[RMDB]
RNA sequence: GGGAACGACUCGAGUAGAGUCGAAAAGAGAAGCGUGAGCUUCUCACGUCAAGCUUCGGCUUGACGAGACUAUCUUCGGAUAGUCAACCUCAUUCUACGGAAUGAGGAACUGCAGGCUACGGCCUGCAGAAGUAGUACUUCGGUACUACAGUGCACCGGUGACGGUGCACACUAGCACUUCGGUGCUAGAGAGACGAGCUACGGCUCGUCUCCAGGCGCAUUUGAACUGUAUUGUACGCCUUGCAUAAAGCAAAAGUACUAAAAAUACACUGAUGUUCGCAUCAGUGAAAAGAAACAACAACAACAAC
Reactivity to 2A3 in 0.01 (KOAc 150mM, MgCl2 10mM, bicine 150mM(pH8.5), 24C), signal-to-noise 9, nucleotides 027 to 266: g010a000g000a000a000g000c040g030u140g050a030g010c010u000u010c000u000c000a010c000g000u000c000a010a000g000c000u040u170c240g130g000c000u010u010g000a000c000g000a000g000a000c000u000a010u000c010u030u040c170g120g000a000u000a000g000u000c010a020a120c000c000u000c000a000u000u000c000u010a030c270g120g010a000a000u000g000a000g000g000a010a020c000u000g000c000a010g000g000c000u020a080c300g140g000c000c000u000g000c000a000g000a050a030g000u000a000g000u010a010c010u030u040c300g090g000u000a000c000u000a000c020a010g010u000g000c000a000c010c000g010g050u060g050a030c010g000g000u000g000c000a000c000a000c000u000a000g000c000a000c010u030u060c290g110g000u000g000c000u000a000g010a000g000a000g000a010c000g000a000g000c000u040a030c260g120g000c000u010c000g000u000c000u000c000c000a010g020g000c040g020c080a080u090u110u300g120a140a060c070u100g050u200a110u170u110g010u020a020c020g000c020c000u010u020g030c060a100u150a290a160a080g010c020a030a030a020a010g040u020a020c040u130a020a080a040a010a070u180a070
Reactivity to DMS in 0.01 (KOAc 150mM, MgCl2 10mM, bicine 150mM(pH8.5), 24C), signal-to-noise 3, nucleotides 027 to 266: g000a020g000a020a010g000c000g000u030g010a240g000c000u000u000c000u010c000a100c010g000u000c000a020a010g010c000u020u030c200g010g000c000u010u000g000a010c010g020a150g000a010c010u000a010u000c000u000u040c190g000g000a010u000a010g000u000c000a120a200c010c010u000c000a000u010u000c000u000a130c200g030g000a020a000u000g000a000g000g010a040a090c020u000g000c000a010g000g010c000u010a090c220g020g010c010c000u010g010c010a000g000a160a130g000u000a010g000u000a000c000u000u010c220g030g010u020a010c000u000a000c000a080g030u000g000c010a010c000c000g000g000u010g000a070c010g000g010u000g020c010a000c010a050c020u000a010g000c000a000c010u000u020c150g010g020u000g000c000u010a000g000a200g000a010g010a020c010g000a020g020c000u000a090c170g020g010c000u000c010g000u000c000u000c010c300a020g000g010c020g010c050a030u000u010u000g000a080a130c140u000g000u000a060u010u000g010u000a030c010g000c030c010u000u000g010c000a090u010a080a080a300g010c010a040a020a020a060g020u000a000c000u010a020a100a090a110a050u010a180